Notes
Structure probing data (DMS) for a 177-nucleotide construct. For DMS the reverse transcriptase was MarathonRT. The RNA was probed in 150 mM KOAc, 10 mM MgCl2 and 150 mM bicine (pH 8.5) at 24 C.
RNA sequence: GGGAACGACUCGAGUAGAGUCGAAAAGAUAUGGAGGUGACCCAGCGAUUAUGGACUAUGAAGGUUCGGUAGGGUCGGAAACGACCCUACCGAACUGGAGUCCAGAAUCGCUGCACCUCCUAAGUCAUCAAAUGUUAGAGUUCGCUCUAACAUUUGAAAAAGAAACAACAACAACAAC
Reactivity to DMS in 0.01 (KOAc 150mM, MgCl2 10mM, bicine 150mM(pH8.5), 24C), signal-to-noise 2, nucleotides 027 to 126: g020a060u010a300u010g000g000a010g000g010u010g010a270c300c290c160a030g010c010g010a010u000u000a080u000g000g010a020c000u010a260u010g010a190a270g020g010u000u010c000g000g050u010a020g000g000g050u020c000g000g000a080a070a240c010g000a030c040c000c010u000a000c020c030g000a000a000c020u000g010g010a010g010u000c010c020a000g010a030a000u000c000g010c000u000g000c000a000c000c000u000c000c000u000a010a030g010u010c060a220
Reactivities are given for positions 27 through 126.